[RMDB]
RNA sequence: GGGAACGACUCGAGUAGAGUCGAAAAAUAUUGGCCGCGCGAAAGUGGAUUCAGCGGCUGAUUCGCUGCGUCUGCUCAAUCCGCAUCUUCAGGUCGAAACAAUCCAAGCACGCUUGAGUGAUGACGACUAAUAUGGCUGGUUCGCCAGCCAUAUUAGAAAAGAAACAACAACAACAAC
Reactivity to 2A3 in 0.01 (KOAc 150mM, MgCl2 10mM, bicine 150mM(pH8.5), 24C), signal-to-noise 2, nucleotides 027 to 126: a010u040a030u040u060g030g020c020c030g000c000g010c030g010a250a040a040g060u090g040g040a030u000u040c020a010g030c040g020g000c060u010g010a040u080u120c000g010c030u020g000c030g000u020c020u040g000c010u000c000a030a040u020c000c010g030c060a070u060c070u150u130c070a050g010g010u030c000g000a030a050a010c030a060a020u030c020c050a000a020g100c030a010c080g060c020u140u130g080a080g060u050g070a090u050g000a040c060g030a020
Reactivity to DMS in 0.01 (KOAc 150mM, MgCl2 10mM, bicine 150mM(pH8.5), 24C), signal-to-noise 3, nucleotides 027 to 126: a080u020a070u000u010g010g020c040c030g010c060g000c180g010a020a120a040g000u020g000g000a040u010u000c020a040g010c000g010g000c300u010g010a060u020u000c020g020c010u000g000c060g000u010c000u000g000c010u000c030a080a060u010c040c020g020c010a130u010c090u010u000c230a150g010g020u010c030g010a070a070a090c160a090a140u010c020c040a030a090g010c060a070c110g010c090u000u000g000a060g020u000g010a060u010g030a100c100g000a140